[RMDB]
RNA sequence: GGGAACGACUCGAGUAGAGUCGAAAAACGGACGGUGUUUGCGUGAGUGCCAGCAAACCUACACUUGCGGUUGCCAAUCUCAGAUUUACGACCUAGGCGGCUAGGUCAGCGUGGUGGUAACAAUGUGGUCCUUCGAUUAUUUCGAUAAUCGAAGGACAAAAGAAACAACAACAACAAC
Reactivity to 2A3 in 0.01 (KOAc 150mM, MgCl2 10mM, bicine 150mM(pH8.5), 24C), signal-to-noise 4, nucleotides 027 to 126: a000c040g020g070a020c050g030g010u060g020u060u050u100g040c030g000u070g030a070g030u060g090c000c000a010g020c010a050a050a070c000c020u070a040c040a000c080u040u140g030c040g060g000u010u030g000c010c020a050a130u030c030u000c030a020g020a100u060u100u210a070c090g000a000c010c000u010a030g060g090c010g000g090c110u010a000g000g000u000c000a010g010c000g030u060g000g000u000g010g020u020a030a000c050a060a120u200g030u070g160
Reactivity to DMS in 0.01 (KOAc 150mM, MgCl2 10mM, bicine 150mM(pH8.5), 24C), signal-to-noise 3, nucleotides 027 to 126: a090c040g020g030a080c180g010g010u010g010u000u010u030g000c030g020u030g010a080g020u010g030c080c110a060g030c020a010a070a080c050c040u030a140c070a080c030u020u040g010c100g010g000u000u000g000c020c030a050a040u030c020u000c050a150g010a170u000u020u020a080c110g000a010c020c010u000a020g000g010c300g000g000c010u000a010g020g010u000c000a030g000c090g000u000g000g010u000g010g010u000a020a050c040a060a020u020g010u030g000